This 177-nucleotide RNA was probed chemically with DMS and 2A3. The RNA was probed in 150 mM KOAc, 10 mM MgCl2 and 150 mM bicine (pH 8.5) at 24 C. Source: RMDB library M2PK90, as collected in RNAgym. The DMS profile rests on 1,991 reads. 2A3 adducts were read by reverse transcription with SuperScript II with manganese.

[RMDB]
RNA sequence: GGGAACGACUCGAGUAGAGUCGAAAAUACAAGUACGAAAGUACAAGCCUUAUCAGUUGGGCCUUCUGGUCAAAUUAGCGCUCACCCAGGAGGUCCUUCCCAUGAGGUCGACAAGCGCUAAAAGAAACUUUGUAUCUGGAUUCGUCCAGAUACAAAGAAAAGAAACAACAACAACAAC
Reactivity to DMS in 0.01 (KOAc 150mM, MgCl2 10mM, bicine 150mM(pH8.5), 24C), signal-to-noise 3, nucleotides 027 to 126: u020a080c210a100a160g020u010a010c000g000a140a120a160g020u000a000c010a090a130g010c050c030u010u000a070u010c150a140g000u000u000g020g000g000c010c000u010u000c000u030g000g000u000c040a070a050a150u000u010a010g000c020g010c000u000c160a170c300c000c010a010g000g010a010g000g000u000c000c010u010u000c000c000c020a100u000g000a050g010g000u000c070g030a060c180a070a020g000c010g020c010u000a030a060a110a120g010a100a070a130
Reactivity to 2A3 in 0.01 (KOAc 150mM, MgCl2 10mM, bicine 150mM(pH8.5), 24C), signal-to-noise 2, nucleotides 027 to 126: u140a020c040a150a050g010u000a010c020g030a070a060a050g020u020a000c060a050a020g040c000c020u110u080a150u150c060a200g130u250u140g030g010g000c020c010u010u030c000u000g030g000u040c020a040a030a260u060u020a000g000c000g000c020u010c040a020c000c010c000a000g000g010a010g000g000u010c000c000u000u000c000c000c000a050u090g040a020g040g120u090c040g020a060c080a110a020g000c000g000c010u020a080a020a000a020g060a010a100a020